Chemical mapping of a 177-nucleotide RNA with 2A3 and DMS. The RNA was probed in 150 mM KOAc, 10 mM MgCl2 and 150 mM bicine (pH 8.5) at 24 C. The DMS profile rests on 2,626 reads. The 2A3 profile rests on 1,323 reads. Source: RMDB library OK2TST, as collected in RNAgym. Reactivities are rounded to 0.1 and cut off at 0 and 3. For DMS the reverse transcriptase was MarathonRT. For 2A3 the reverse transcriptase was SuperScript II with manganese.
[RMDB]
RNA sequence: GGGAACGACUCGAGUAGAGUCGAAAAAGAGAAGUGAUAUGCCUAUUAUUAGAGGGUUAACUUCAAUUGAGAAAUGUACGAUUUUGACAGAUGCAUUACGGAAUGCUCAAUUUGGAAACCCAGGUUCUAGUGUUAACAGGUUCGCCUGUUAACACUAAAAAGAAACAACAACAACAAC
Reactivity to 2A3 in 0.01 (KOAc 150mM, MgCl2 10mM, bicine 150mM(pH8.5), 24C), signal-to-noise 2, nucleotides 027 to 126: a000g090a020g040a060a070g050u070g080a090u090a010u260g050c000c020u060a070u290u040a090u080u110a120g080a090g090g030g020u050u100a030a010c000u030u020c000a020a040u020u010g010a010g040a010a050a040u080g010u050a030c060g100a290u050u100u080u130g080a090c020a050g190a180u090g090c000a010u000u010a040c050g040g110a120a010u050g000c010u010c000a020a050u100u030u150g060g000a050a020a020c010c000c010a000g000g090u100u010c030
Reactivity to DMS in 0.01 (KOAc 150mM, MgCl2 10mM, bicine 150mM(pH8.5), 24C), signal-to-noise 4, nucleotides 027 to 126: a080g010a160g010a050a040g020u000g000a170u010a060u000g000c020c010u000a100u010u010a180u010u010a120g010a120g000g010g000u000u000a100a100c020u000u000c040a160a020u010u010g000a030g000a050a070a080u000g000u000a070c070g000a180u000u000u010u010g010a100c190a090g010a090u010g010c020a020u000u000a080c100g010g000a130a110u000g010c010u000c020a020a000u000u000u000g000g000a100a060a070c010c000c000a120g010g000u000u010c090